[RMDB]
The data come from the RNA Mapping Database (RMDB), library OK3TST. Chemical mapping of a 207-nucleotide RNA with DMS and 2A3. The RNA was probed in 150 mM KOAc, 10 mM MgCl2 and 150 mM bicine (pH 8.5) at 24 C. Values cover nucleotides 27 to 156. The 2A3 profile rests on 1,650 reads.
RNA sequence: GGGAACGACUCGAGUAGAGUCGAAAAGAGAGACUUGAGUUUGCAUGCCUGUGGUCUUUUGCCAUGUGAUGCCCUUCACCAUGAAAACCCUCAUCAGAAGUUGAGCAGAUGCCAGUGCCGUGCUCUUGGACUUUCCAGACUCCAGAAGUGUGAGAAACAUAUUUAGCGGUUUCGACCGCUAAAUAUGAAAAGAAACAACAACAACAAC
Reactivity to DMS in 0.01 (KOAc 150mM, MgCl2 10mM, bicine 150mM(pH8.5), 24C), signal-to-noise 2, nucleotides 027 to 156: g000a110g010a140g020a080c060u010u000g020a100g040u000u010u000g000c030a070u000g000c050c050u000g030u000g010g030u000c050u020u000u010u000g030c000c040a110u010g020u010g010a080u000g020c030c020c030u030u000c040a140c080c030a120u000g010a020a040a050a070c020c010c010u000c040a150u010c080a090g000a070a120g000u000u010g020a100g030c020a100g000a110u000g000c020c040a100g000u000g000c040c050g000u000g030c010u000c010u000u000g020g000a200c030u000u000u000c030c040a140g050a090c030u000c000c020a140g010a070a080g030u010g020u000g020a110g040a190a070a140
Reactivity to 2A3 in 0.01 (KOAc 150mM, MgCl2 10mM, bicine 150mM(pH8.5), 24C), signal-to-noise 3, nucleotides 027 to 156: g070a000g010a000g010a020c050u070u060g010a050g050u040u090u070g060c010a050u120g050c020c070u080g050u080g010g040u080c060u080u170u090u150g030c020c000a070u070g020u060g020a020u070g020c020c010c030u040u060c050a080c070c010a040u110g100a050a040a040a060c030c000c000u050c040a080u040c030a030g090a240a020g070u080u080g010a000g000c030a010g010a060u050g020c020c020a050g020u070g020c030c010g020u040g010c010u050c040u080u030g030g020a050c000u030u030u000c010c010a030g050a070c030u010c010c010a040g020a190a040g120u020g030u030g070a020g040a060a070a000